Notes
Conditions: 150 mM KOAc, 10 mM MgCl2 and 150 mM bicine (pH 8.5), 24 C. Structure probing data (DMS and 2A3) for a 177-nucleotide construct. For 2A3, 24,048 sequencing reads were counted.
RNA sequence: GGGAACGACUCGAGUAGAGUCGAAAAAAAAGAUAUGGAUAGGUGUUGACGCGCUCGAUAUGCGUUUGACGCUUAUCGGAAACGAUAAGCCGAGCAUGCGAGCGCGAAGGCCUAUCCUAAGUCAAAAGUAACAUAUUUUGUUCGCAAAAUAUGUUACAAAAGAAACAACAACAACAAC
Reactivity to DMS in 0.01 (KOAc 150mM, MgCl2 10mM, bicine 150mM(pH8.5), 24C), signal-to-noise 6, nucleotides 027 to 126: a080a050a080a060g010a070u000a300u000g000g000a010u000a010g010g020u000g010u010u020g020a300c040g020c010g010c000u000c000g010a070u010a010u000g010c000g000u000u000u000g010a180c300g000c000u000u000a000u000c000g010g000a140a110a160c010g000a010u000a010a010g000c000c010g010a070g010c000a000u000g000c010g000a020g010c010g030c010g010a070a030g010g010c010c000u010a000u000c000c000u010a010a080g000u000c030a070a080a120a140
Reactivity to 2A3 in 0.01 (KOAc 150mM, MgCl2 10mM, bicine 150mM(pH8.5), 24C), signal-to-noise 6, nucleotides 027 to 126: a000a000a000a060g110a060u140a070u160g010g000a010u010a000g020g030u120g120u300u230g180a140c030g000c000g010c000u010c010g160a260u010a010u230g020c030g060u060u150u300g030a020c020g000c000u000u000a000u010c000g000g000a080a100a010c010g000a000u000a000a000g000c020c010g010a010g000c000a000u010g000c000g010a000g000c010g000c000g000a000a000g020g000c010c010u000a000u000c000c000u000a020a010g030u010c030a050a030a030a140